Structure probing data (DMS and 2A3) for a 177-nucleotide construct. The RNA was probed in 150 mM KOAc, 10 mM MgCl2 and 150 mM bicine (pH 8.5) at 24 C. DMS adducts were read by reverse transcription with MarathonRT. For DMS, 696 sequencing reads were counted. It was measured as part of the RMDB library OK2TRN. For 2A3, 1,227 sequencing reads were counted.
RNA sequence: GGGAACGACUCGAGUAGAGUCGAAAAUGCAGGCCAUCUGCUCAGCGAUGCGCCAGGAGCUUGACAGCGAUCUGCGCAUCCACGAGACGCGCAAGCUGCCCACCUUUGUCAUCCUGCCGCAGGUCACGGAGGAAUGAACCUUCGGGUUCAUUCCUCCAAAAGAAACAACAACAACAAC
Reactivity to DMS in 0.01 (KOAc 150mM, MgCl2 10mM, bicine 150mM(pH8.5), 24C), signal-to-noise 1, nucleotides 027 to 126: u030g000c050a070g010g000c040c010a030u000c090u000g010c070u040c070a120g020c190g000a020u000g020c010g020c070c120a010g010g000a290g000c040u000u010g010a130c090a060g010c010g000a130u010c110u000g010c000g000c000a050u000c000c020a130c110g000a110g010a030c010g000c040g000c050a050a170g000c000u000g000c050c010c010a070c070c070u000u000u010g110u030c070a130u000c040c000u000g010c030c030g010c000a070g010g000u000c080a110c070
Reactivity to 2A3 in 0.01 (KOAc 150mM, MgCl2 10mM, bicine 150mM(pH8.5), 24C), signal-to-noise 1, nucleotides 027 to 126: u100g000c040a010g020g110c050c030a070u070c030u100g060c030u030c000a090g000c060g040a000u020g030c020g000c050c020a000g010g000a010g000c050u070u150g140a080c030a040g020c020g060a170u010c020u020g030c000g000c010a020u000c000c010a070c070g150a200g000a000c020g000c000g000c020a030a000g010c020u090g040c000c020c010a060c020c040u150u140u090g100u060c030a040u010c000c000u050g090c090c000g020c050a010g020g000u030c020a010c110